[RMDB]
RNA sequence: GGGAACGACUCGAGUAGAGUCGAAAAAGGUCCAGACGGUUGUCUUCCUCGAUUUGACAUUGCUUAUGAAAUAAAGAGUUUGAAUAAUAGAUUGAUGAAGAACAAUAAGGAAGUAUCAAUCAGUAUACAGUCAAAAUACCUUCGGGUAUUUUGACUGAAAAGAAACAACAACAACAAC
Reactivity to DMS in 0.01 (KOAc 150mM, MgCl2 10mM, bicine 150mM(pH8.5), 24C), signal-to-noise 2, nucleotides 027 to 126: a050g000g050u020c000c020a120g020a110c090g050g100u020u020g010u020c010u000u000c020c000u020c040g010a030u010u000u000g040a160c050a030u010u040g000c040u000u000a060u000g010a120a100a140u000a140a050a060g030a080g000u000u010u010g060a050a060u030a070a120u010a020g000a020u000u020g000a080u000g020a100a110g020a040a120c060a050a090u030a070a120g000g000a040a090g000u000a070u000c000a000a010u000c020a090g000u020a070u020a170
Reactivity to 2A3 in 0.01 (KOAc 150mM, MgCl2 10mM, bicine 150mM(pH8.5), 24C), signal-to-noise 2, nucleotides 027 to 126: a050g100g010u000c020c020a000g030a000c010g030g050u140u000g000u000c000u010u020c010c000u000c060g090a180u120u000u030g070a030c090a090u100u000g040c000u030u040a050u230g160a140a170a120u170a030a160a010g080a000g000u030u040u140g080a140a070u200a220a000u060a070g100a070u040u030g000a010u000g070a080a100g000a130a000c040a180a040u090a070a010g040g020a000a020g000u010a060u200c000a000a000u000c030a010g000u000a030u020a170